RNA sequence: GGGAACGACUCGAGUAGAGUCGAAAAGCCCUCCUGAACGUGACUUCAGAAGACGGGCGCCGACAAGUUAGAUUGUCAAGGCGACAGUGUAGUGACACUGGGUAAUCUAACUUACCAAUCGCCGGCGCGUUGAGUCACGUCAACAACCGUCGAGGGACCAUAGUCCGACUUUCGAGUCGGACUAUGGAAAAGAAACAACAACAACAAC
Reactivity to 2A3 in 0.01 (KOAc 150mM, MgCl2 10mM, bicine 150mM(pH8.5), 24C), signal-to-noise 3, nucleotides 027 to 156: g010c000c000c000u030c030c030u060g060a080a000c010g020u000g020a010c000u160u070c210a100g040a260a020g000a110c060g020g020g020c000g000c000c000g010a020c020a020a000g000u010u020a000g000a000u000u020g030u070c050a050a080g280g090c090g050a020c010a010g000u020g010u050a240g140u140g240a040c000a000c000u010g040g000g030u030a000a000u010c010u000a000a000c000u010u040a070c030c060a030a060u120c060g010c010c000g000g000c000g000c000g040u040u080g000a010g010u010c010a000c030g010u020c010a040a080c030a040a030c000c030g030u040c010g010a040g020g040g010a010
Reactivity to DMS in 0.01 (KOAc 150mM, MgCl2 10mM, bicine 150mM(pH8.5), 24C), signal-to-noise 1, nucleotides 027 to 156: g010c010c000c000u000c020c030u000g010a030a050c030g000u010g010a020c000u000u000c080a240g020a180a200g040a170c000g000g000g050c000g040c030c060g000a030c020a090a060g020u010u000a010g050a010u000u010g020u000c010a050a070g020g000c010g020a200c020a040g040u000g000u000a270g010u020g050a280c000a020c000u010g020g030g010u000a020a060u000c010u000a000a020c010u010u010a190c200c030a110a200u020c090g070c050c030g040g040c030g000c030g000u000u000g000a040g040u000c050a050c030g000u000c000a080a050c030a140a120c080c050g000u020c020g020a100g050g120g000a210
Structure probing data (2A3 and DMS) for a 207-nucleotide construct.
The RNA was probed in 150 mM KOAc, 10 mM MgCl2 and 150 mM bicine (pH 8.5) at 24 C.
The 2A3 profile rests on 2,126 reads.
2A3 is a SHAPE reagent: it acylates the 2'-hydroxyl of flexible nucleotides of all four kinds.
The data come from the RNA Mapping Database (RMDB), library OK3TST.